[RMDB]
RNA sequence: GGGAACGACUCGAGUAGAGUCGAAAAGCAGGCCAUCUCUAAGGGGAUGAAAAGGUUGGAGCUUGAGCAUGCACAGAAGUUUAUAACACGCCUUUAUAGUUGGUUAUUUGAGAAGUCCGGGCGCGACGGAUCGAUGAAGUUUCGACUUCAUCGAUCCAAAAGAAACAACAACAACAAC
Reactivity to DMS in 0.01 (KOAc 150mM, MgCl2 10mM, bicine 150mM(pH8.5), 24C), signal-to-noise 1, nucleotides 027 to 126: g020c000a100g020g010c040c010a070u010c010u000c020u010a080a120g070g000g020g000a040u000g010a070a050a090a050g000g000u000u010g000g000a110g000c050u010u020g020a120g030c080a030u000g060c090a080c090a050g000a090a040g030u000u010u000a090u020a040a080c050a060c130g010c040c030u010u020u030a100u000a080g030u010u000g000g020u000u020a060u000u000u000g030a060g030a130a070g000u000c030c060g020g000g020c030g000c090g000a060c080
Structure probing data (DMS) for a 177-nucleotide construct. DMS (dimethyl sulfate) methylates the pairing face of unpaired adenines and cytosines. Conditions: 150 mM KOAc, 10 mM MgCl2 and 150 mM bicine (pH 8.5), 24 C. Reactivities are given for positions 27 through 126.